Source: RMDB library 15KLIB, as collected in RNAgym. The record gives the reactivity of an RNA of 170 nucleotides to DMS and 2A3.

[RMDB]
RNA sequence: GGGAACGACUCGAGUAGAGUCGAAAAUAUUUAGGGCUUCAUUUUAUUUCAAAGAAUUUGCUACCCGCACUUUCACUGCUACCACUGCUGUAGGUAGUUGUAUAAAGAGUGUAGUGCGGCAUCUAGGACAGCUCAGCGUUCGCGCUGAGCAAAAGAAACAACAACAACAAC
Reactivity to DMS in 0.01 (KOAc 150mM, MgCl2 10mM, bicine 150mM(pH8.5), 24C), signal-to-noise 1, nucleotides 027 to 129: u000a090u050u070u020a110g040g040g010c000u000u080c070a040u050u000u010u110a110u060u020u040c080a070a090a050g000a080a090u000u000u000g010c030u030a090c230c010c000g010c000a060c020u010u060u000c060a010c000u000g000c040u000a060c000c010a060c010u000g000c260u080g000u000a060g060g040u030a030g010u010u050g000u050a060u020a000a030a010g040a020g070u030g030u000a010g020u000g160c070g030g030c160a030u010c100u000a070g040g040a160c170a160
Reactivity to 2A3 in 0.01 (KOAc 150mM, MgCl2 10mM, bicine 150mM(pH8.5), 24C), signal-to-noise 3, nucleotides 027 to 129: u160a030u030u200u150a060g020g090g000c000u010u000c070a040u060u030u070u150a060u020u130u100c030a040a140a000g050a080a110u090u030u060g000c000u050a100c000c000c000g090c030a020c000u010u250u140c010a000c000u050g020c000u000a000c020c000a000c030u110g000c060u060g040u160a060g060g030u000a000g040u000u020g040u000a080u020a010a100a030g140a000g000u000g000u080a000g000u000g060c000g000g000c000a000u080c010u040a050g000g050a040c050a010

For DMS, 4,141 sequencing reads were counted. Values cover nucleotides 27 to 129. DMS adducts were read by reverse transcription with MarathonRT. 2A3 adducts were read by reverse transcription with SuperScript II with manganese.